[RMDB]
RNA sequence: GGGAACGACUCGAGUAGAGUCGAAAACUCCCAUCCAACUCCUAUUCCAACACGUCCUCGUCGUACAGAGUGGUAACAUGUGUCACCACAUAUCCAAGCUUGGGUACACGGGCUUGGCCCAACCCCUAAAACAGAGACGAGUUCGCUCGUCUCUGAACAUUUUGAUCUACUUCGGUAGAUCAAAAUGAAAAGAAACAACAACAACAAC
Reactivity to DMS in 0.01 (KOAc 150mM, MgCl2 10mM, bicine 150mM(pH8.5), 24C), signal-to-noise 2, nucleotides 027 to 156: c070u010c000c000c010a170u020c070c090a110a110c020u010c020c010u000a050u000u000c020c030a080a050c060a100c070g010u010c000c010u000c070g020u000c070g010u000a080c060a160g000a140g030u000g010g030u050a030a040c030a190u010g020u000g020u000c030a040c020c000a030c040a150u000a070u000c020c030a050a080g030c020u000u000g010g010g040u020a130c080a120c060g020g010g040c030u010u000g020g060c050c010c020a070a090c000c000c010c020u000a040a070a100a140c010a030g000a040g010a020c000g010a030g010u000u000c290g030c000u000c000g040u000c000u000c010u000g000a020a100
Reactivity to 2A3 in 0.01 (KOAc 150mM, MgCl2 10mM, bicine 150mM(pH8.5), 24C), signal-to-noise 5, nucleotides 027 to 156: c030u040c000c000c020a040u070c040c030a030a060c010u000c010c010u030a040u050u050c020c010a030a030c020a040c110g050u050c030c050u050c050g090u040c030g040u090a050c050a100g090a040g060u050g020g020u050a080a060c050a140u210g120u070g040u160c010a020c040c030a020c020a040u110a040u050c020c020a020a030g000c050u070u070g020g000g020u050a020c050a020c060g000g000g020c020u090u100g090g000c010c000c000a040a050c000c010c000c000u080a070a090a010a040c010a010g000a000g000a000c000g000a000g020u030u020c140g040c030u000c000g000u000c000u000c000u010g000a010a000
An RNA of 207 nucleotides, treated with DMS and 2A3 and read out base by base. The RNA was probed in 150 mM KOAc, 10 mM MgCl2 and 150 mM bicine (pH 8.5) at 24 C. Source: RMDB library M2RFPK, as collected in RNAgym.